Structure probing data (DMS and 2A3) for a 207-nucleotide construct. The data come from the RNA Mapping Database (RMDB), library OK3TST. For 2A3 the reverse transcriptase was SuperScript II with manganese. For 2A3, 3,633 sequencing reads were counted. For DMS the reverse transcriptase was MarathonRT.
RNA sequence: GGGAACGACUCGAGUAGAGUCGAAAACAGCUAACCGGGCGUGAUAACUACCGCCGAUUUAGCCGUGCAUGGCUAGGUGAUGAGAGCCUCCUAGAUAAUCCUGAUCGUGUCGGCAAUCCUGACGGUGCCGUGGCUAGCGCAAUCUGGUUUUGGAAGGUGUUUGUUUAUAGUUCGCUAUAAACAAACAAAAAGAAACAACAACAACAAC
Reactivity to DMS in 0.01 (KOAc 150mM, MgCl2 10mM, bicine 150mM(pH8.5), 24C), signal-to-noise 2, nucleotides 027 to 156: c060a150g020c010u020a020a030c070c010g030g010g030c020g020u000g000a180u000a080a170c110u000a100c040c010g000c020c000g000a060u000u000u000a040g040c020c010g000u000g000c080a030u010g000g020c020u000a020g020g030u000g000a140u020g010a170g000a200g010c040c010u000c020c010u000a070g000a110u000a080a110u000c030c000u000g010a010u010c040g060u000g020u010c020g010g030c050a080a090u000c020c020u020g020a050c030g050g000u000g020c020c010g060u010g050g000c010u000a090g030c000g010c070a050a100u000c020u000g000g030u010u000u000u000g020g000a110a070g000g050
Reactivity to 2A3 in 0.01 (KOAc 150mM, MgCl2 10mM, bicine 150mM(pH8.5), 24C), signal-to-noise 5, nucleotides 027 to 156: c030a020g040c030u040a020a020c030c000g050g040g010c030g050u090g070a130u070a200a060c060u070a040c060c030g000c010c010g030a030u050u060u110a010g000c000c020g020u080g040c050a060u090g050g000c000u010a000g000g020u030g020a080u100g050a030g010a010g100c010c010u010c010c010u020a070g020a120u100a120a050u090c010c020u050g030a070u100c020g000u010g040u040c010g010g010c000a020a070u070c030c060u090g030a060c040g020g000u020g030c030c030g030u050g020g010c010u010a020g020c020g000c030a010a050u030c040u090g050g000u020u010u090u100g090g030a070a050g070g010